[RMDB]
RNA sequence: GGGAACGACUCGAGUAGAGUCGAAAAGCUUAAUAACCUGCGCUGAGCCCUUCUGCCCCAGCUUGCCUGUGUCCUAGGGAAUUGGAAGGUCAUCCUUCACAGGAUCGUGUGGAAGUCCUGCUCGGGGUCCAAACAUGGUAAUUCGUUACCAUGUUAAACCAUAAACCAGAUUCGUCUGGUUUAUGGUAAAAGAAACAACAACAACAAC
Reactivity to DMS in 0.01 (KOAc 150mM, MgCl2 10mM, bicine 150mM(pH8.5), 24C), signal-to-noise 2, nucleotides 027 to 156: g030c060u000u010a040a180u010a100a080c020c010u010g000c070g020c050u010g000a120g020c040c060c020u000u030c040u000g020c030c000c020c000a140g000c060u000u000g020c040c000u000g030u010g020u000c030c040u000a100g010g030g010a070a140u000u010g020g000a070a090g000g030u000c070a120u000c020c000u000u040c080a040c060a040g030g000a050u000c070g010u010g020u000g010g000a090a090g020u000c030c000u000g020c030u000c060g050g000g000g000u010c040c060a110a030a020c000a010u010g000g010u000a000a070u000u010c300g010u000u000a010c000c000a000u000g010u000u000a020a100
Reactivity to 2A3 in 0.01 (KOAc 150mM, MgCl2 10mM, bicine 150mM(pH8.5), 24C), signal-to-noise 4, nucleotides 027 to 156: g030c030u110u120a080a030u090a160a200c010c030u060g030c050g010c060u040g020a050g020c020c000c020u030u030c030u060g000c010c000c000c020a010g030c040u060u130g050c030c000u060g010u010g020u060c030c060u040a070g020g030g100a060a090u100u100g070g040a080a040g030g040u080c030a090u100c000c000u050u040c030a030c010a080g000g030a050u080c070g040u050g030u050g120g020a040a020g030u020c020c020u030g030c000u000c060g000g000g000g020u000c010c020a020a020a040c000a000u000g000g000u020a050a000u060u020c080g060u060u000a000c000c000a000u000g000u000u010a030a020
Structure probing data (DMS and 2A3) for a 207-nucleotide construct. It was measured as part of the RMDB library M2RFPK. Reactivities are given for positions 27 through 156. DMS adducts were read by reverse transcription with MarathonRT.